An RNA of 207 nucleotides, treated with 2A3 and DMS and read out base by base. The 2A3 profile rests on 767 reads. The reactions ran in a buffer of 150 mM KOAc, 10 mM MgCl2 and 150 mM bicine (pH 8.5), at 24 C. Values are in units of 0.01, from 0 to 300, in steps of 10. Values cover nucleotides 27 to 156. DMS adducts were read by reverse transcription with MarathonRT.
RNA sequence: GGGAACGACUCGAGUAGAGUCGAAAAAACAGGAACAUAUUUACAGUGUUAAGUGAUUUGAUAAUUUUGUAGUUCUGCCCUAAAAAUCAAUAUCCUUAAUUAACCCUUCAUCAGUUUCUUAAGUCAUCUGUCAUCCUGAAAGCAAGUUAAUUAUUCACUAAUUACCCAUGUUCGCAUGGGUAAUUAGAAAAGAAACAACAACAACAAC
Reactivity to 2A3 in 0.01 (KOAc 150mM, MgCl2 10mM, bicine 150mM(pH8.5), 24C), signal-to-noise 2, nucleotides 027 to 156: a000a000c040a030g050g000a070a000c030a020u140a110u100u140u170a150c070a070g000u010g010u030u080a070a040g010u080g140a100u060u030u090g020a020u020a170a100u090u130u070u140g070u010a040g030u010u030c010u050g030c000c000c000u030a080a100a020a000a000u020c010a010a000u020a040u180c020c000u050u080a020a010u040u040a040a030c030c020c000u030u060c030a110u040c000a040g000u030u090u000c010u090u020a110a030g000u040c050a060u010c070u110g070u010c010a040u020c020c000u050g020a040a020a000g050c040a040a020g050u070u050a080a040u060u140a070u200u280c050a000
Reactivity to DMS in 0.01 (KOAc 150mM, MgCl2 10mM, bicine 150mM(pH8.5), 24C), signal-to-noise 1, nucleotides 027 to 156: a070a040c030a080g020g000a060a080c050a140u010a110u000u010u000a110c080a150g000u000g010u010u000a050a040g050u000g020a080u000u000u100g010a090u010a040a120u000u000u000u000g010u000a060g000u000u000c080u000g010c030c030c030u010a010a060a040a170a060u010c030a040a120u010a060u000c040c010u010u000a020a100u000u000a060a100c030c000c000u010u010c080a100u010c020a070g000u000u000u000c050u000u010a070a110g050u010c010a030u000c010u000g010u000c010a090u000c030c030u000g000a060a070a070g030c080a040a080g010u000u010a070a080u010u010a100u010u010c050a200